[RMDB]
RNA sequence: GGGAACGACUCGAGUAGAGUCGAAAACACACCGUAUUCAAGGACUUACGGAAGAUGUCAGCUUUCAAAGCUUAGGCAUCUACGUCGGAGACGAUUCGGUGAGCUACAAUACGAAAGAGUCCGUUGAAUUAUAUCGGCGUUUCGACGCCGAUAUAAUAAAAGAAACAACAACAACAAC
Reactivity to DMS in 0.01 (KOAc 150mM, MgCl2 10mM, bicine 150mM(pH8.5), 24C), signal-to-noise 2, nucleotides 027 to 126: c080a200c020a030c000c010g000u000a000u010u000c030a060a080g020g010a020c000u000u000a020c020g000g000a130a040g010a010u020g010u000c010a030g000c010u010u000u010c280a120a040a010g010c000u010u020a130g010g000c010a010u000c000u000a050c000g020u000c070g000g000a050g000a100c140g010a010u000u010c020g000g020u000g000a050g020c050u010a190c100a050a100u010a100c020g010a070a110a180g000a020g000u010c070c050g000u000u010g010a100
Reactivity to 2A3 in 0.01 (KOAc 150mM, MgCl2 10mM, bicine 150mM(pH8.5), 24C), signal-to-noise 1, nucleotides 027 to 126: c100a000c000a000c010c000g000u020a000u000u020c010a010a010g090g110a110c010u000u010a010c000g030g070a150a020g030a020u000g000u030c020a010g010c040u000u200u170c190a230a140a010g000c010u110u090a090g000g000c000a010u010c040u010a010c010g020u060c070g000g020a020g000a000c000g010a010u000u050c000g000g000u000g000a010g000c010u040a070c020a080a110u070a190c020g070a080a020a020g060a050g060u150c260c030g030u000u060g040a050
This 177-nucleotide RNA was probed chemically with DMS and 2A3.
Source: RMDB library OK2TST, as collected in RNAgym.
2A3 adducts were read by reverse transcription with SuperScript II with manganese.